[RMDB]
RNA sequence: GGGAACGACUCGAGUAGAGUCGAAAAGGCCAUGCGAUACCAAGGGCCAUUGAGAUUGAGGCGCGGCGGUUUUCAUCUCAGGCGAGGGGACCGACGGAUCGUUCGUUACUCCAUGAGUGGCGAGCGGGACUUAUCAUAGGUUCGCCUAUGAUAAGUCAAAAGAAACAACAACAACAAC
Reactivity to 2A3 in 0.01 (KOAc 150mM, MgCl2 10mM, bicine 150mM(pH8.5), 24C), signal-to-noise 5, nucleotides 027 to 126: g040g010c010c010a040u120g040c040g090a070u070a180c050c030a070a100g060g010g010c010c030a020u040u170g060a090g030a040u090u130g030a030g030g030c060g000c020g070g010c030g040g000u010u040u050u060c030a090u000c020u020c050a040g080g070c050g020a030g000g010g000g010a010c020c000g020a020c010g040g030a070u090c010g000u010u010c000g010u010u000a010c000u020c060c090a160u300g010a000g000u000g010g000c020g000a000g010c020g010g040
Reactivity to DMS in 0.01 (KOAc 150mM, MgCl2 10mM, bicine 150mM(pH8.5), 24C), signal-to-noise 5, nucleotides 027 to 126: g010g010c020c020a080u010g020c080g000a110u000a090c110c060a110a130g010g000g000c000c020a100u000u010g010a080g000a070u010u000g000a080g020g010c070g030c050g020g000c050g010g000u010u000u000u000c030a060u010c040u020c040a080g010g000c050g010a080g010g000g000g010a080c050c050g010a060c140g000g000a090u010c000g020u000u000c010g010u000u000a020c000u000c010c220a160u010g010a010g020u000g000g000c000g000a020g000c010g000g010